RNA sequence: GGGAACGACUCGAGUAGAGUCGAAAAGGAAUCGACAGUAGAGUGUAUCAUGUCAGUAAGCAUGCCGGGGAAUGGUGGUUUACCCCGUUAUCAAAUGAUUACCGACCAAUAAUUGGCGAAACUCGGUAGGCCCGUCCACACUUCGGUGUGGACGGAACGAAGUGACCUUCUUCGGAAGGUCACUUCGAAAAGAAACAACAACAACAAC
Reactivity to 2A3 in 0.01 (KOAc 150mM, MgCl2 10mM, bicine 150mM(pH8.5), 24C), signal-to-noise 2, nucleotides 027 to 156: g060g000a030a070u100c030g030a050c050a030g050u120a030g020a100g060u070g030u080a130u200c040a050u070g070u070c030a020g020u170a080a000g010c030a000u010g070c030c030g010g000g020g050a060a100u040g030g020u060g020g000u030u040u280a170c000c000c030c090g000u010u020a050u060c060a030a000a130u030g000a000u090u030a070c000c000g000a020c060c040a010a000u280a160a120u160u140g000g000c020g010a090a000a000c040u020c010g000g010u030a000g080g060c040c000c000g000u000c010c000a000c030a000c000u010u090c230g040g000u010g000u000g020g000a000c010g000g000a000a000
This 207-nucleotide RNA was probed chemically with 2A3. The reactions ran in a buffer of 150 mM KOAc, 10 mM MgCl2 and 150 mM bicine (pH 8.5), at 24 C.